[RMDB]
RNA sequence: GGGAACGACUCGAGUAGAGUCGAAAAUAAAUUCGCGAACGAUGUGUAUUUGGCAAACCGAGCUAUGAAUGAACAGUUGAGCUCUCUCAAAAAACGUUCACAUGGUAACAUCUCACUAUAUGCAUGCUAUAAACGUGAAGUGUCAAAAUACACGGAAUCUCACGAUUACCUUCGGGUAAUCGUGAGAAAAAGAAACAACAACAACAAC
Reactivity to 2A3 in 0.01 (KOAc 150mM, MgCl2 10mM, bicine 150mM(pH8.5), 24C), signal-to-noise 2, nucleotides 027 to 156: u060a010a020a020u180u150c110g030c080g110a100a080c010g020a100u120g000u000g000u000a000u000u000u010g000g000c000a060a000a010c160c020g070a040g000c000u040a080u010g130a300a070u050g000a040a020c000a110g030u010u020g000a030g090c040u000c000u000c010u030c140a030a050a000a000a010a000c090g000u010u000c020a030c000a020u000g070g010u090a060a050c010a090u050c030u040c070a060c020u040a050u040a010u280g090c090a090u130g020c020u220a140u100a000a140a070c090g020u050g080a110a000g070u000g000u010c020a060a000a000a000u040a000c000a000c000g050g000a040a020
The data come from the RNA Mapping Database (RMDB), library OK3TST.
Chemical mapping of a 207-nucleotide RNA with 2A3.
Conditions: 150 mM KOAc, 10 mM MgCl2 and 150 mM bicine (pH 8.5), 24 C.